The record gives the reactivity of an RNA of 177 nucleotides to 2A3. High 2A3 reactivity points to a flexible backbone, as in loops and unpaired stretches. It was measured as part of the RMDB library RFM100. Values are in units of 0.01, from 0 to 300, in steps of 10. The reactions ran in a buffer of 150 mM KOAc, 10 mM MgCl2 and 150 mM bicine (pH 8.5), at 24 C.
RNA sequence: GGGAACGACUCGAGUAGAGUCGAAAAACGCUCUACGGAGCGAAUCUAUGAUGAGUAUCGGACACUUUUGAACUUAAUUGAAAACGAAACACGAUUUUUUGCGUUAUCUAAAUUUUCCUCUGACAAAGGUUUCUACGGGAUUCGUCCCGUAGAAACCAAAAGAAACAACAACAACAAC
Reactivity to 2A3 in 0.01 (KOAc 150mM, MgCl2 10mM, bicine 150mM(pH8.5), 24C), signal-to-noise 2, nucleotides 027 to 126: a010c000g000c000u010c000u000a070c170g090g000a020g030c000g000a010a060u070c100u120a090u170g070a110u090g000a040g080u030a120u020c010g060g050a060c000a100c120u050u260u000u090g060a110a070c000u160u060a080a130u090u080g060a120a070a020a060c070g030a020a020a020c140a080c170g120a170u110u080u000u000u010u180g000c020g000u080u010a050u110c060u120a000a150a130u060u000u020u040c000c030u010c060u120g060a080c040a090a140a000